[RMDB]
Notes: The data come from the RNA Mapping Database (RMDB), library OK1LIB. An RNA of 177 nucleotides, treated with 2A3 and read out base by base.
RNA sequence: GGGAACGACUCGAGUAGAGUCGAAAACAUUGAAAACAUGGAAGCACUGGACGGUCGUUUCAUCCUAGUCUUGGACUCCUCAGCAGUGCGCAUCCACGAUCCCGCAUGCGGGACUUGGGUUCAGGACUCCACUCCCCUCGUUCGCGAGGGGAGUGGAAAAAGAAACAACAACAACAAC
Reactivity to 2A3 in 0.01 (KOAc 150mM, MgCl2 10mM, bicine 150mM(pH8.5), 24C), signal-to-noise 2, nucleotides 027 to 126: c040a040u100u210g090a100a040a030a030c130a030u150g060g010a080a000g030c010a010c030u030g020g040a000c080g060g040u000c000g000u040u000u070c080a090u040c000c040u050a000g000u010c000u000u000g000g050a000c020u120c010c010u150c080a100g050c000a000g070u020g010c020g010c050a060u040c040c070a090c200g060a190u020c000c000c000g000c020a110u160g020c010g000g000g020a030c040u040u080g000g040g000u030u000c000a000g040g000a000c030

For 2A3 the reverse transcriptase was SuperScript II with manganese. The reactions ran in a buffer of 150 mM KOAc, 10 mM MgCl2 and 150 mM bicine (pH 8.5), at 24 C.